[RMDB]
RNA sequence: GGGAACGACUCGAGUAGAGUCGAAAAGGCGAUGACGUCGGUGAGGUAGAGCUCCUGUUGGGCGUUGUUGGAGCUCAGCCGGCUCAGUGCGGACCGCAGCGCGGCGAUGUCGAAGGCGUAGACGCCGUCACCAGCUUUUCUUCGGAAAAGCUGGUGAAAAAGAAACAACAACAACAAC
Reactivity to DMS in 0.01 (KOAc 150mM, MgCl2 10mM, bicine 150mM(pH8.5), 24C), signal-to-noise 1, nucleotides 027 to 126: g010g020c030g020a060u000g020a020c160g030u000c020g010g050u020g010a040g040g010u020a070g000a030g000c010u000c020c000u000g020u010u000g010g020g010c060g020u000u000g030u040u000g010g010a040g020c000u010c010a260g030c020c020g030g000c020u010c030a100g040u000g010c090g010g030a150c040c010g030c090a070g030c130g030c040g020g000c030g010a090u010g010u000c050g000a130a120g000g000c030g010u000a110g000a090c000g000c010c020g030
This 177-nucleotide RNA was probed chemically with DMS. Source: RMDB library OK2TRN, as collected in RNAgym. The DMS profile rests on 1,006 reads.